[RMDB]
RNA sequence: GGGAACGACUCGAGUAGAGUCGAAAAGCUCGGUGACACCGCGUCUGCCUGGGUCCGAAAGAUUUCUUGUCGCAAAUCUACAAGACAUUGGUUAACGUGUGGGCCGCUUGAGCGGCCGCUCGGCGGGUCAUCCUUGGCGCUUCGGUGCUAGGGAUGAAAAAGAAACAACAACAACAAC
Reactivity to DMS in 0.01 (KOAc 150mM, MgCl2 10mM, bicine 150mM(pH8.5), 24C), signal-to-noise 5, nucleotides 027 to 126: g000c010u000c040g010g020u010g000a100c100a110c030c020g010c020g000u020c080u010g010c010c010u010g020g010g010u010c000c020g000a110a120a050g000a040u000u000u000c020u020u020g010u030c180g000c200a030a030a040u020c020u000a040c150a130a070g000a020c040a060u010u010g000g010u000u010a080a160c040g000u000g010u010g000g010g020c010c010g010c010u010u040g010a070g000c010g010g010c040c030g000c030u010c020g010g010c010g000g000g010
Reactivity to 2A3 in 0.01 (KOAc 150mM, MgCl2 10mM, bicine 150mM(pH8.5), 24C), signal-to-noise 6, nucleotides 027 to 126: g010c010u000c010g010g030u040g020a020c010a020c030c010g000c010g020u000c030u040g020c000c010u020g040g000g020u000c000c000g030a070a030a000g020a000u010u020u000c020u030u080g090u060c050g010c080a020a010a050u030c000u030a020c030a030a030g010a000c020a030u020u070g020g020u040u100a050a000c010g010u020g000u080g040g020g000c000c000g000c000u160u270g030a020g030c000g010g000c020c010g000c000u010c010g040g000c010g010g000g020
Source: RMDB library OK1LIB, as collected in RNAgym.
The record gives the reactivity of an RNA of 177 nucleotides to DMS and 2A3.
For DMS the reverse transcriptase was MarathonRT.